Notes
An RNA of 177 nucleotides, treated with DMS and 2A3 and read out base by base. The 2A3 profile rests on 960 reads. For DMS, 2,055 sequencing reads were counted. DMS adducts were read by reverse transcription with MarathonRT. Reactivities are given for positions 27 through 126. The reactions ran in a buffer of 150 mM KOAc, 10 mM MgCl2 and 150 mM bicine (pH 8.5), at 24 C.

[RMDB]
RNA sequence: GGGAACGACUCGAGUAGAGUCGAAAACGUGCCAAGCGCUGCGUCACCAGGGGAUGACUGUCGGAAGAUGGUCAGUCCCGGGUGCAUAAGGAGUGGUGGAUGGUUCAGGACCGAAAGGUAGCAGACACAUCAUACCCGCGUUCGCGCGGGUAUGAUGAAAAGAAACAACAACAACAAC
Reactivity to DMS in 0.01 (KOAc 150mM, MgCl2 10mM, bicine 150mM(pH8.5), 24C), signal-to-noise 2, nucleotides 027 to 126: c030g000u010g030c020c000a080a100g000c030g010c010u030g020c090g000u020c030a000c020c010a070g000g000g000g040a090u000g000a000c010u000g020u000c050g000g150a150a120g000a000u000g000g000u030c000a040g010u000c000c020c000g000g000g090u010g000c070a080u060a080a170g050g020a080g070u000g000g000u000g010g020a040u000g000g000u010u000c020a190g020g000a050c020c000g030a100a080a140g000g020u000a100g000c100a080g000a100c150a140
Reactivity to 2A3 in 0.01 (KOAc 150mM, MgCl2 10mM, bicine 150mM(pH8.5), 24C), signal-to-noise 2, nucleotides 027 to 126: c020g030u040g000c010c000a080a110g010c000g000c020u060g050c040g050u100c020a000c010c000a050g000g020g000g000a010u060g000a010c000u010g000u040c060g030g180a120a060g000a100u000g020g000u000c020a020g110u020c000c000c010g010g020g000u000g010c000a020u050a130a080g110g010a050g030u020g000g030u060g080g070a090u080g020g020u070u050c000a000g000g080a060c000c000g100a120a040a000g040g000u020a020g060c030a060g060a060c000a000